Chemical mapping of a 207-nucleotide RNA with 2A3 and DMS. Values cover nucleotides 27 to 156. DMS adducts were read by reverse transcription with MarathonRT. Conditions: 150 mM KOAc, 10 mM MgCl2 and 150 mM bicine (pH 8.5), 24 C. 2A3 adducts were read by reverse transcription with SuperScript II with manganese. The 2A3 profile rests on 2,147 reads.

RNA sequence: GGGAACGACUCGAGUAGAGUCGAAAAGUGCUAGAUUUUGUCUUCGGACACCAACUCGAACUAAACGAAAUAUUUGUCUUUCUAUGAAAUCAUAGAGGACAAGCGUUGAUUAUUUCCAUUCAGUUUGGCAAUCACUCCUUGGAACGGGGUUGAGCGAACAGACUCUCUUAUUCGUAAGAGAGUCUGUAAAAGAAACAACAACAACAAC
Reactivity to 2A3 in 0.01 (KOAc 150mM, MgCl2 10mM, bicine 150mM(pH8.5), 24C), signal-to-noise 4, nucleotides 027 to 156: g090u080g050c070u060a040g010a270u140u090u070u110g040u030c030u030u040c200g080g000a020c010a010c050c020a050a070c010u070c120g040a070a030c050u100a180a020a020c040g060a060a090a030u150a090u050u040u000g000u000c010u020u300u010c000u000a010u010g060a210a110a060u250c010a000u000a000g000a010g000g000a000c000a010a000g000c020g070u050u080g040a100u040u100a040u080u090u000c060c020a060u050u050c010a020g040u020u070u070g060g000c010a010a040u030c010a020c030u020c020c020u030u050g080g030a020a030c060g020g000g020g000u020u120g010a030g010c030g020a030
Reactivity to DMS in 0.01 (KOAc 150mM, MgCl2 10mM, bicine 150mM(pH8.5), 24C), signal-to-noise 1, nucleotides 027 to 156: g010u010g020c020u000a170g000a180u010u010u000u010g020u000c040u010u030c040g020g010a170c070a090c060c020a050a020c020u000c040g040a100a140c070u010a040a050a030c040g010a120a080a060u000a060u010u000u000g010u000c000u000u000u000c000u000a000u020g010a220a130a190u000c010a020u000a000g010a040g020g000a040c000a010a040g020c140g050u000u000g010a180u000u000a110u000u000u000c040c000a170u000u000c030a000g040u000u000u010g010g000c080a110a100u000c070a050c010u000c000c020u000u000g000g020a120a160c160g020g000g000g020u000u010g030a080g000c000g000a150